Chemical mapping of a 207-nucleotide RNA with 2A3. 2A3 adducts were read by reverse transcription with SuperScript II with manganese. The reactions ran in a buffer of 150 mM KOAc, 10 mM MgCl2 and 150 mM bicine (pH 8.5), at 24 C.
RNA sequence: GGGAACGACUCGAGUAGAGUCGAAAACGACCACCUGACGGGUCGGACAUAGCGUCAGGAUCAUCCGUGGCAGUCACCACGGUAAUCAUGUGACUGAUGAUGGUUUUCCAUCUUAAUCUGACUGUGUCGUAGCAGUCUACAGUACUAUGACAUUAGAAUGAGGGAUAGCUUUCGAGCUAUCCCUCAUAAAAGAAACAACAACAACAAC
Reactivity to 2A3 in 0.01 (KOAc 150mM, MgCl2 10mM, bicine 150mM(pH8.5), 24C), signal-to-noise 1, nucleotides 027 to 156: c000g000a000c000c000a000c000c000u020g000a000c000g020g030g000u000c020g000g040a090c090a190u060a150g080c020g000u000c000a000g000g000a000u120c000a000u030c000c030g040u150g020g010c000a000g000u030c000a000c000c000a000c010g000g000u000a300a050u110c160a010u240g000u000g000a000c000u000g000a000u190g000a000u000g000g160u030u290u190u000c000c000a020u000c000u070u090a160a160u020c090u170g220a000c030u000g000u010g030u060c030g050u020a000g000c000a020g070u020c040u150a060c200a000g060u050a030c000u000a000u000g000a000c030a030u060u130a000g050a160